[RMDB]
Description: An RNA of 207 nucleotides, treated with DMS and 2A3 and read out base by base. It was measured as part of the RMDB library OK3TST. For 2A3 the reverse transcriptase was SuperScript II with manganese. The DMS profile rests on 3,366 reads. The reactions ran in a buffer of 150 mM KOAc, 10 mM MgCl2 and 150 mM bicine (pH 8.5), at 24 C. 2A3 is a SHAPE reagent: it acylates the 2'-hydroxyl of flexible nucleotides of all four kinds.
RNA sequence: GGGAACGACUCGAGUAGAGUCGAAAAGGGCGAUACCGGGCCCGAUACCGGAAUUAGUAGUUUUCUACGAGAGGCCCAAUCUGCGGCCUAAUGCAGUGUAGGUCGAACCGAGGACCGAGACUCGAUAAUUACGUCGAUAGAUGGACGAUUCCAUCAACGAGGUAUAUUAGUUCGCUAAUAUACCUCGAAAAGAAACAACAACAACAAC
Reactivity to DMS in 0.01 (KOAc 150mM, MgCl2 10mM, bicine 150mM(pH8.5), 24C), signal-to-noise 2, nucleotides 027 to 156: g000g000g020c000g010a170u010a040c020c030g000g020g000c030c030c080g020a110u000a060c020c010g030g010a090a090u000u010a110g020u000a050g020u000u000u010u000c040u000a050c020g000a230g010a240g000g070c000c010c010a120a130u000c060u000g010c010g000g020c030c040u000a000a050u000g010c090a060g000u010g060u000a090g010g000u000c010g000a050a150c050c020g010a300g020g000a050c030c020g020a250g000a070c020u000c030g000a110u020a030a140u010u000a080c080g030u000c020g030a150u010a090g010a050u000g040g030a050c080g000a300u000u000c000c000a030u000c020a040a290
Reactivity to 2A3 in 0.01 (KOAc 150mM, MgCl2 10mM, bicine 150mM(pH8.5), 24C), signal-to-noise 3, nucleotides 027 to 156: g000g000g000c000g010a010u030a110c000c010g000g030g010c010c000c040g040a010u010a020c000c000g000g040a050a030u130u050a060g030u000a030g020u020u080u070u110c030u020a080c030g010a020g010a080g150g020c000c000c000a000a090u060c040u070g050c040g050g050c040c010u010a010a030u160g020c040a010g040u010g000u170a010g000g040u000c050g020a060a030c080c060g040a070g010g050a000c000c000g000a010g030a010c030u010c020g010a020u080a090a090u160u080a030c100g050u030c020g050a050u070a240g010a000u020g000g020a020c090g070a070u190u000c010c000a020u020c000a020a040